[RMDB]
Conditions: 150 mM KOAc, 10 mM MgCl2 and 150 mM bicine (pH 8.5), 24 C. Chemical mapping of a 177-nucleotide RNA with 2A3 and DMS. The DMS profile rests on 606 reads. For 2A3, 1,616 sequencing reads were counted.
RNA sequence: GGGAACGACUCGAGUAGAGUCGAAAAGAUAUGGAGCUGAACUACAGCUCAACGUGGCGAAGAACUCGGAAACGAGGGAGCCACCACGGCUGCAGCUCCUAAGUCGAAACUCGGCUUCGGCCGAGAACGAUGGCUAUUGGUUCGCCAAUAGCCAUCGAAAAGAAACAACAACAACAAC
Reactivity to 2A3 in 0.01 (KOAc 150mM, MgCl2 10mM, bicine 150mM(pH8.5), 24C), signal-to-noise 1, nucleotides 027 to 126: g020a020u070a050u080g010g000a030g000c020u000g020a090a090c130u180a060c300a010g010c030u020c040a000a010c060g010u000g000g030c030g120a300a020g000a200a080c020u020c020g030g090a040a040a050c000g000a000g060g020g000a000g000c000c000a010c020c010a040c040g030g000c020u000g040c010a000g000c000u000c020c000u000a020a030g030u000c000g000a060a020a040c010u010c000g030g000c020u060u120c300g170g010c030c000g010a000g000a030a000
Reactivity to DMS in 0.01 (KOAc 150mM, MgCl2 10mM, bicine 150mM(pH8.5), 24C), signal-to-noise 1, nucleotides 027 to 126: g000a020u000a300u000g000g010a000g000c030u000g000a140a100c100u010a270c000a000g000c060u000c070a060a210c300g000u000g000g000c000g000a100a080g000a110a300c000u030c020g010g000a220a160a160c010g000a000g000g000g000a100g000c040c000a070c000c090a060c300g030g010c000u000g000c070a030g000c000u010c000c010u000a030a030g000u000c060g000a150a010a160c000u000c000g000g020c010u010u000c300g000g000c000c000g010a000g000a010a040